[RMDB]
RNA sequence: GGGAACGACUCGAGUAGAGUCGAAAAUGAAGCAAAGCCAUAAUUGCCAAUGAUGAGCAAUUCGCUAUUGCCGCCUAAAAACGGUUAGCCGGGGCUGCUAGAGCCUUGUUACCAAAGAUAGCCGGCGUUACGGCAUGAUGGUUCGCCAUCAUGCCAACUUUACGAAUGGAUUCGUCCAUUCGUAAAGAAAAGAAACAACAACAACAAC
Reactivity to 2A3 in 0.01 (KOAc 150mM, MgCl2 10mM, bicine 150mM(pH8.5), 24C), signal-to-noise 4, nucleotides 027 to 156: u100g020a090a010g020c010a050a000a040g000c020c010a070u160a220a030u000u010g000c010c020a120a140u250g130a120u080g020a130g030c000a010a000u030u000c040g000c020u080a280u110u080g000c010c000g020c000c010u080a110a090a020a000a020c070g020g020u080u070a020g010c020c000g010g000g020g000c030u030g020c090u080a050g030a000g250c010c000u010u040g050u070u080a070c050c040a060a040a020g080a050u050a020g040c000c030g040g010c000g060u100u110a060c090g000g010c000a010u010g000a000u000g000g050u050u060c150g010c070c000a000u000c000a010u000g000c000c000a000a000
Reactivity to DMS in 0.01 (KOAc 150mM, MgCl2 10mM, bicine 150mM(pH8.5), 24C), signal-to-noise 2, nucleotides 027 to 156: u010g010a110a130g010c010a040a070a060g050c010c060a160u000a070a020u010u000g010c010c020a080a150u000g010a230u000g010a130g020c010a020a020u010u020c090g000c000u000a100u000u010g000c010c000g020c020c040u000a060a060a120a090a070c020g010g010u010u000a060g040c040c030g030g020g010g020c010u010g000c060u000a160g020a070g010c030c010u000u000g010u020u010a210c130c060a060a090a120g020a190u000a020g000c030c090g070g000c020g020u000u010a090c180g030g000c000a030u000g020a050u010g000g080u000u020c300g000c000c000a020u000c000a030u000g020c000c000a000a010